[RMDB]
RNA sequence: GGGAACGACUCGAGUAGAGUCGAAAACGCUCAAUAGGGACCUAAACAAAGAGCGAGUUACAAAAUCGGAAGUUCAGGCUAAGCCGGUGCCAGCAUUCGAAUUCCUUAAGAUGGUCCGCACUACGGCAAAUAUAUUAAUAUUCGUAUUAAUAUAUUUAAAAGAAACAACAACAACAAC
Reactivity to DMS in 0.01 (KOAc 150mM, MgCl2 10mM, bicine 150mM(pH8.5), 24C), signal-to-noise 2, nucleotides 027 to 126: c030g020c020u000c010a090a090u030a110g000g010g020a050c010c010u030a070a100a090c110a020a130a100g000a000g000c020g020a220g020u040u050a040c100a000a010a070a040u010c010g000g010a000a070g020u010u010c140a090g000g010c020u010a070a160g000c010c000g050g020u010g030c000c040a060g040c040a070u000u020c020g030a050a090u000u000c010c000u000u020a050a130g020a090u010g000g000u000c030c010g000c180a120c150u010a060c040g010g010c040
Reactivity to 2A3 in 0.01 (KOAc 150mM, MgCl2 10mM, bicine 150mM(pH8.5), 24C), signal-to-noise 2, nucleotides 027 to 126: c000g000c000u000c020a080a210u120a200g000g000g070a010c020c000u090a140a180a060c060a070a210a030g000a010g010c030g000a030g030u150u110a070c090a060a090a050a070u030c010g020g000a030a020g010u010u160c130a070g020g020c020u090a020a010g010c000c000g000g020u010g010c000c000a020g000c020a030u000u030c010g020a010a030u000u040c020c000u100u110a040a030g020a080u130g000g000u010c020c000g050c030a100c040u190a050c030g000g000c000
Conditions: 150 mM KOAc, 10 mM MgCl2 and 150 mM bicine (pH 8.5), 24 C. Structure probing data (DMS and 2A3) for a 177-nucleotide construct. Values are in units of 0.01, from 0 to 300, in steps of 10.